RNA sequence: GGGAACGACUCGAGUAGAGUCGAAAAGAUAUGGAAUCGUCGGGAGCGUGUCGGAAACGACCACGCGAAGAACGACGGAUUCCUAAGUCAAAACUGAGCUUGUAGACUUCGGUCUACAAGCUCAGAACAAUUUUCACAUCUUCGGAUGUGAAAAUUGAAAAGAAACAACAACAACAAC
Reactivity to DMS in 0.01 (KOAc 150mM, MgCl2 10mM, bicine 150mM(pH8.5), 24C), signal-to-noise 1, nucleotides 027 to 126: g050a020u000a300u000g000g010a040a000u000c000g010u010c000g000g000g000a130g000c010g000u000g030u020c010g000g010a110a100a250c010g010a010c190c110a000c000g020c000g000a110a130g030a150a170c000g000a020c000g000g000a010u000u010c010c010u000a020a110g010u010c030a030a080a150a150c000u000g000a030g010c000u010u000g000u020a000g000a000c000u000u010c140g060g020u000c000u020a000c010a000a000g000c030u000c000a010g000a020a140

Conditions: 150 mM KOAc, 10 mM MgCl2 and 150 mM bicine (pH 8.5), 24 C.
Chemical mapping of a 177-nucleotide RNA with DMS.
The data come from the RNA Mapping Database (RMDB), library TTRDEL.